Chemical mapping of a 177-nucleotide RNA with DMS and 2A3.
2A3 adducts were read by reverse transcription with SuperScript II with manganese.
The RNA was probed in 150 mM KOAc, 10 mM MgCl2 and 150 mM bicine (pH 8.5) at 24 C.
For DMS, 9,501 sequencing reads were counted.
RNA sequence: GGGAACGACUCGAGUAGAGUCGAAAACCCUGGUUAUUCGUAACCAGGGGUUGAGUGAAUCCUCACAGUGCAUCGGUGGAUCACACGAAACGCAUGGACGACAAUUACGGUUAUUCGUAACCGUAAACAAUAGCGACGAAUUCGUUCGUCGCUAUUGAAAAGAAACAACAACAACAAC
Reactivity to DMS in 0.01 (KOAc 150mM, MgCl2 10mM, bicine 150mM(pH8.5), 24C), signal-to-noise 7, nucleotides 027 to 126: c000c000c000u010g000g000u000u000a000u000u000c160g020u000a010a000c010c000a010g010g000g000g000u000u000g010a160g010u010g000a150a110u000c020c010u010c090a080c100a090g010u000g000c080a050u000c050g010g020u000g000g000a090u000c110a060c040a070c030g010a040a050a080c060g000c050a050u010g010g000a060c050g000a050c120a090a180u000u000a000c010g000g000u000u000a030u000u020c200g010u000a000a010c000c000g010u000a000a020a110
Reactivity to 2A3 in 0.01 (KOAc 150mM, MgCl2 10mM, bicine 150mM(pH8.5), 24C), signal-to-noise 5, nucleotides 027 to 126: c000c000c000u000g000g000u010u030a050u040u090c250g030u030a000a010c000c000a000g020g010g010g010u060u190g040a040g010u090g040a090a050u000c000c010u030c020a110c040a070g100u100g060c020a060u060c070g140g000u060g030g070a120u150c030a030c000a000c090g020a050a040a010c050g010c030a030u060g060g000a030c040g010a030c050a080a060u050u010a010c000g020g000u010u010a020u030u080c180g020u030a010a000c000c000g020u010a000a030a000